Structure probing data (2A3) for a 207-nucleotide construct. Conditions: 150 mM KOAc, 10 mM MgCl2 and 150 mM bicine (pH 8.5), 24 C. The data come from the RNA Mapping Database (RMDB), library OK3TST. 2A3 adducts were read by reverse transcription with SuperScript II with manganese.
RNA sequence: GGGAACGACUCGAGUAGAGUCGAAAACAGUCCACAGAUGGGUCAUAGGCAAGGGCAGGUGGUAGAUGCAGGUGGUAGGAGGUUGGAUUCCAUAUCCUAAAGGGACUGCACCUUCUCCUUCUUUGUUCCUGUCCCACCAUGGCCACCACCUUUUACAGGCUAAACGGUAUUUCGAUACCGUUUAGCCAAAAGAAACAACAACAACAAC
Reactivity to 2A3 in 0.01 (KOAc 150mM, MgCl2 10mM, bicine 150mM(pH8.5), 24C), signal-to-noise 3, nucleotides 027 to 156: c010a020g090u040c020c030a150c020a070g180a160u160g040g000g030u010c040a020u030a190g040g030c100a080a210g000g000g000c010a020g000g020u120g040g080u140a090g040a120u170g040c010a010g000g040u000g020g000u070a010g020g030a010g000g010u090u150g080g000a100u110u040c000c030a010u050a170u250c000c020u100a110a060a080g000g000g000a010c050u060g070c060a010c000c000u020u010c000u000c000c000u050u090c020u050u110u120g050u040u060c010c000u040g080u170c010c010c010a060c000c000a010u000g010g030c000c000a000c000c020a020c010c000u180u180u120u190a090c140a050